[RMDB]
RNA sequence: GGGAACGACUCGAGUAGAGUCGAAAAGAUAUGGAUCAAGUCGAGGAAUACAACCAGGACCCAGUGGCCAGGUCGGAAACGACCUGGCUGCCUGGUUGUAUUCCUAAGACAGCUUGAUCCUAAGUCACAUAGAGUGUAACUUCGGUUACACUCUAUGAAAAGAAACAACAACAACAAC
Reactivity to DMS in 0.01 (KOAc 150mM, MgCl2 10mM, bicine 150mM(pH8.5), 24C), signal-to-noise 4, nucleotides 027 to 126: g000a060u010a300u000g000g030a000u000c000a000a030g010u010c020g000a000g010g010a020a000u000a000c010a010a000c020c000a020g020g010a180c080c100c140a260g030u000g000g020c010c000a000g000g060u000c000g020g010a060a080a300c000g020a010c000c000u000g000g000c000u000g000c000c000u000g020g000u000u000g000u020a000u000u000c000c000u000a030a020g020a050c300a100g000c020u000u000g000a010u000c000c000u000a010a050g000u000c070a250